Overview
This 177-nucleotide RNA was probed chemically with 2A3 and DMS. The data come from the RNA Mapping Database (RMDB), library RFM100. For DMS, 1,045 sequencing reads were counted.

[RMDB]
RNA sequence: GGGAACGACUCGAGUAGAGUCGAAAAGACCGAGUGGAAAAGAAAAUCCUGGCCAUAGUAGCAGCGUUAGUCGGGUAAGAAUCCCGAUGGCCGAAAGAGCAAGGGUUCCUCGGCAAUGCUUAUCAGCCUGAACCGGAAUGUUCGCAUUCCGGUUCAGAAAAGAAACAACAACAACAAC
Reactivity to 2A3 in 0.01 (KOAc 150mM, MgCl2 10mM, bicine 150mM(pH8.5), 24C), signal-to-noise 2, nucleotides 027 to 126: g010a000c000c030g000a000g020u250g120g000a150a210a060a050g080a000a300a070a060u080c010c020u020g020g000c010c010a100u090a300g110u070a030g010c150a010g010c000g060u020u160a020g010u000c030g000g000g000u090a190a150g070a100a080u070c020c000c000g030a000u130g000g020c000c000g000a040a070a000g030a030g000c000a020a030g030g000g040u000u100c000c000u000c000g000g000c000a120a060u040g050c000u200u280a030u050c010a040g000c000
Reactivity to DMS in 0.01 (KOAc 150mM, MgCl2 10mM, bicine 150mM(pH8.5), 24C), signal-to-noise 1, nucleotides 027 to 126: g000a240c000c000g030a020g020u030g000g030a080a070a240a090g000a080a000a030a060u000c030c010u000g020g000c000c040a090u000a050g000u080a140g060c130a150g000c130g020u000u000a190g020u000c010g000g000g010u050a020a150g010a130a120u000c000c020c010g000a000u000g000g000c000c000g000a010a050a060g000a170g030c000a060a060g000g000g060u010u020c040c000u000c000g000g010c070a120a000u000g000c060u010u040a140u000c050a120g000c060